[RMDB]
RNA sequence: GGGAACGACUCGAGUAGAGUCGAAAAAAAAAGGUUAGCAAUGUAAGGAACUUUCUGGCAAUUGCUGGGCGGGGGCCAAGAGUUAGCUAGAAAAAUAGGAAAUGGGCACCCAAGAAAAUGUGACCUCACGUACAUAUCAGUUCGCUGAUAUGUACGUAAAAGAAACAACAACAACAAC
Reactivity to 2A3 in 0.01 (KOAc 150mM, MgCl2 10mM, bicine 150mM(pH8.5), 24C), signal-to-noise 1, nucleotides 027 to 126: a000a000a000a000a000g070g000u030u020a010g000c010a000a010u070g020u100a040a030g040g020a060a150c100u070u140u010c010u040g000g020c020a040a120u050u090g050c020u020g000g060g000c040g020g000g000g040g000c040c000a020a030g020a000g060u110u030a020g030c000u010a010g090a060a110a000a020a040u090a010g020g040a020a150a060u070g010g010g000c040a040c000c020c010a010a030g090a010a020a020a030u090g000u020g020a040c000c020u000c060
Reactivity to DMS in 0.01 (KOAc 150mM, MgCl2 10mM, bicine 150mM(pH8.5), 24C), signal-to-noise 3, nucleotides 027 to 126: a020a040a040a120a060g020g010u000u000a060g030c020a040a020u000g010u010a140a120g000g010a070a140c180u000u000u000c010u010g010g000c110a160a020u000u000g020c040u010g010g010g010c180g000g020g010g000g010c010c010a040a070g000a070g010u010u000a070g020c020u000a040g000a050a030a040a090a070u000a080g020g000a050a050a060u000g000g010g020c040a040c030c010c020a050a110g000a050a050a050a110u010g010u000g010a060c040c010u000c240

About this RNA:
Structure probing data (2A3 and DMS) for a 177-nucleotide construct. The reactions ran in a buffer of 150 mM KOAc, 10 mM MgCl2 and 150 mM bicine (pH 8.5), at 24 C. 2A3 adducts were read by reverse transcription with SuperScript II with manganese. Values are in units of 0.01, from 0 to 300, in steps of 10. DMS adducts were read by reverse transcription with MarathonRT. The DMS profile rests on 2,674 reads.